[RMDB]
RNA sequence: GGGAACGACUCGAGUAGAGUCGAAAAUGUAGUAAGGCAAGUCCCUUCAAGAGUUAUCGUUGAUACCCCUCGUAGUGCACAUUCCUUUAACGCUUCAAAAUCUGUAAAGCACGCCAUAUCGCCGAAAUCCAGACAAGGAGUUCGCUCCUUGUCUGGAAAAAGAAACAACAACAACAAC
Reactivity to 2A3 in 0.01 (KOAc 150mM, MgCl2 10mM, bicine 150mM(pH8.5), 24C), signal-to-noise 2, nucleotides 027 to 126: u050g040u080a210g090u190a180a030g070g030c120a060a020g100u170c000c000c000u070u120c080a130a000g000a000g000u020u020a140u300c120g010u070u080g000a000u190a100c000c000c000c030u000c000g090u140a050g030u000g070c080a040c000a040u000u000c000c000u030u100u120a130a030c000g000c000u000u000c040a110a140a010a180u000c090u090g030u130a000a000a140g080c060a010c000g000c010c000a000u040a000u000c070g000c030c000g000a000a000a150
Reactivity to DMS in 0.01 (KOAc 150mM, MgCl2 10mM, bicine 150mM(pH8.5), 24C), signal-to-noise 2, nucleotides 027 to 126: u020g020u000a070g000u000a060a130g040g020c060a110a060g050u000c040c000c040u010u000c130a090a030g010a080g040u020u050a020u000c080g030u030u000g050a120u100a070c060c000c000c020u020c030g020u000a030g000u000g000c100a110c020a070u000u040c010c000u000u000u040a030a080c100g010c050u010u000c080a010a030a090a090u000c040u020g000u020a020a040a020g000c020a090c040g000c020c100a020u000a070u000c020g040c000c130g000a110a080a140